[RMDB]
RNA sequence: GGGAACGACUCGAGUAGAGUCGAAAAAACGGGGCUAGCGAGUGGAUGUUCCUCCCCCCGAAGGUCCCGAGUGAGGCUUAUCCCGGGGAUCGGCCUCUGUCCCUCCAUGGUGAGCUCCAGGACCCCCAUCCGAUCGACUUCGGUCGAUCGAAAAGAAACAACAACAACAAC
Reactivity to DMS in 0.01 (KOAc 150mM, MgCl2 10mM, bicine 150mM(pH8.5), 24C), signal-to-noise 4, nucleotides 027 to 129: a040a050c040g010g010g020g030c060u000a120g020c060g010a060g000u050g010g050a090u060g000u040u020c000c050u030c000c020c010c010c010c010g030a140a100g030g010u010c030c000c050g000a100g040u000g030a050g010g040c030u030u040a130u020c080c010c010g000g010g010g020a000u030c060g020g010c000c000u050c080u040g000u050c010c040c000u030c100c040a110u000g000g020u090g020a100g050c080u000c000c000a130g000g030a220c000c000c000c000c000a110u050c130
Reactivity to 2A3 in 0.01 (KOAc 150mM, MgCl2 10mM, bicine 150mM(pH8.5), 24C), signal-to-noise 4, nucleotides 027 to 129: a000a000c020g000g000g020g000c020u040a010g110c040g080a020g010u100g030g050a150u110g080u100u060c020c010u030c010c010c000c010c000c010g030a060a020g060g020u030c000c010c000g010a030g030u150g000a010g000g000c010u020u030a040u110c020c010c020g050g020g010g030a000u010c020g000g000c000c000u040c020u010g030u010c000c000c000u000c040c010a020u030g030g020u100g040a050g010c020u020c030c010a010g010g020a040c000c000c000c020c000a050u050c030